[RMDB]
RNA sequence: GGGAACGACUCGAGUAGAGUCGAAAAAAUGGCACUGCAGAGCUGAUGGGCCAUGUACCUAUCCAAAAUGAGAUCCCAUCUUGCACACUGUGCUAAUUUGAGAUUAUCAUGCCUCCUACUUGGAGAGACCGCAUGCCCAGCUUCGGCUGGGCAUGAACUGUAGUAAUUGCUUCGGCAAUUACUACAGAAAAGAAACAACAACAACAAC
Reactivity to DMS in 0.01 (KOAc 150mM, MgCl2 10mM, bicine 150mM(pH8.5), 24C), signal-to-noise 1, nucleotides 027 to 156: a040a030u040g000g000c070a090c030u010g000c000a080g020a150g060c090u000g020a060u010g020g010g030c070c080a090u000g040u000a090c070c020u070a090u010c060c080a040a070a150a090u000g010a100g010a070u000c000c000c000a040u000c050u000u000g000c030a050c040a150c120u010g060u000g040c020u010a040a010u010u010u000g020a090g000a090u000u000a060u020c050a090u000g020c060c020u040c000c020u010a090c080u020u000g030g000a090g010a070g040a040c040c060g000c040a000u000g000c010c000c020a020g040c010u000u000c300g090g000c000u010g000g000g000c020a000u010g040a010a100
Reactivity to 2A3 in 0.01 (KOAc 150mM, MgCl2 10mM, bicine 150mM(pH8.5), 24C), signal-to-noise 3, nucleotides 027 to 156: a010a010u080g030g020c030a010c020u050g010c080a030g030a030g080c020u050g010a030u020g010g010g000c010c010a020u050g060u060a090c020c030u080a140u210c050c060a080a130a040a100u110g010a110g030a260u120c000c000c010a000u010c010u080u200g000c000a010c010a040c120u060g000u000g000c010u030a020a170u030u050u050g080a090g010a070u040u150a080u300c060a030u160g060c010c000u000c000c000u080a200c070u090u120g010g010a010g010a010g030a060c010c070g010c020a000u000g000c000c020c000a010g010c000u030u040c110g080g000c000u010g000g020g010c000a000u000g000a000a000